[RMDB]
RNA sequence: GGGAACGACUCGAGUAGAGUCGAAAAUUAAUUGCCAGUGAGCCUUGCAACAGUUGGCCGAUGGGCUGGGCAAGGGGGUCUGGAGCAAUCCUGACCUCCCGGCUGCAAGGAUAACUACAUGGGCUGGCUCCGAUCCGGGUACCUUGGGUCGGGGCGAUCACAUCCUUAUCUUCGGAUAAGGAUGUGAAAAAGAAACAACAACAACAAC
Reactivity to DMS in 0.01 (KOAc 150mM, MgCl2 10mM, bicine 150mM(pH8.5), 24C), signal-to-noise 1, nucleotides 027 to 156: u020u000a010a120u000u000g010c020c010a060g000u010g010a260g000c000c000u000u000g010c000a050a020c030a290g000u010u000g040g020c010c050g030a170u000g020g000g020c020u000g000g050g030c080a070a050g030g000g000g060g000u000c000u010g000g000a000g020c300a170a260u000c010c000u030g000a020c000c000u000c000c000c000g000g000c000u000g020c020a020a050g010g020a110u000a040a140c020u000a050c030a050u010g010g020g030c070u000g000g000c000u000c000c020g000a020u000c000c010g000g000g000u000a130c120c010u000u000g030g000g020u000c000g030g010g000g030c000g010a110
Reactivity to 2A3 in 0.01 (KOAc 150mM, MgCl2 10mM, bicine 150mM(pH8.5), 24C), signal-to-noise 2, nucleotides 027 to 156: u050u030a010a040u090u090g030c000c000a000g060u010g060a040g020c000c000u040u050g020c020a120a100c020a180g060u120u080g070g040c030c010g060a120u240g140g010g000c020u010g010g040g000c040a060a070g020g000g000g000g000u000c010u050g010g010a010g000c030a020a110u010c000c010u010g020a010c010c010u050c020c000c020g040g000c040u010g010c010a010a010g020g000a030u130a090a090c030u110a030c010a130u130g070g000g000c030u030g110g010c000u010c000c000g000a000u000c000c020g050g010g180u110a280c040c050u080u120g000g010g000u000c000g010g000g000g000c000g010a010
Conditions: 150 mM KOAc, 10 mM MgCl2 and 150 mM bicine (pH 8.5), 24 C. An RNA of 207 nucleotides, treated with DMS and 2A3 and read out base by base. Values cover nucleotides 27 to 156. The DMS profile rests on 2,783 reads. For 2A3 the reverse transcriptase was SuperScript II with manganese. Source: RMDB library RSTRND, as collected in RNAgym.